[RMDB]
RNA sequence: GGGAACGACUCGAGUAGAGUCGAAAAGAUAUGGAGAUCCUACCCACCCUCCUGCAGCCGACGACGCCACGUCUAUCGGAAACGAUAGACGUGGCAUCAGGCUGCCUGAGGAGGGAUCUCCUAAGUCGUAGUAACUUAAGUUCGCUUAAGUUACUACAAAAGAAACAACAACAACAAC
Reactivity to DMS in 0.01 (KOAc 150mM, MgCl2 10mM, bicine 150mM(pH8.5), 24C), signal-to-noise 4, nucleotides 027 to 126: g000a200u010a140u000g000g010a000g020a020u000c010c000u020a270c020c000c000a300c110c000c000u010c000c030u000g000c010a010g020c000c010g000a150c300g010a020c040g020c000c000a000c000g010u000c000u000a000u000c000g000g000a090a090a210c010g020a020u000a010g010a020c000g070u000g000g010c000a000u000c000a160g010g000c000u000g010c000c030u000g000a010g010g010a070g020g000g000a000u000c000u000c000c000u000a040a110g010u020c200
Reactivity to 2A3 in 0.01 (KOAc 150mM, MgCl2 10mM, bicine 150mM(pH8.5), 24C), signal-to-noise 2, nucleotides 027 to 126: g090a110u290a300u300g010g000a000g000a010u010c050c000u100a300c070c020c020a030c000c010c000u000c000c010u000g000c000a000g020c000c000g060a190c170g010a000c060g130c020c000a000c000g020u030c000u000a010u000c020g100g030a160a050a080c030g020a010u010a000g000a010c000g000u020g000g000c000a000u000c010a010g010g010c010u000g000c000c000u010g000a000g000g000a000g000g000g000a000u000c000u000c000c000u020a070a030g190u130c120
An RNA of 177 nucleotides, treated with DMS and 2A3 and read out base by base. DMS adducts were read by reverse transcription with MarathonRT. Reactivities are given for positions 27 through 126. 2A3 adducts were read by reverse transcription with SuperScript II with manganese. The RNA was probed in 150 mM KOAc, 10 mM MgCl2 and 150 mM bicine (pH 8.5) at 24 C.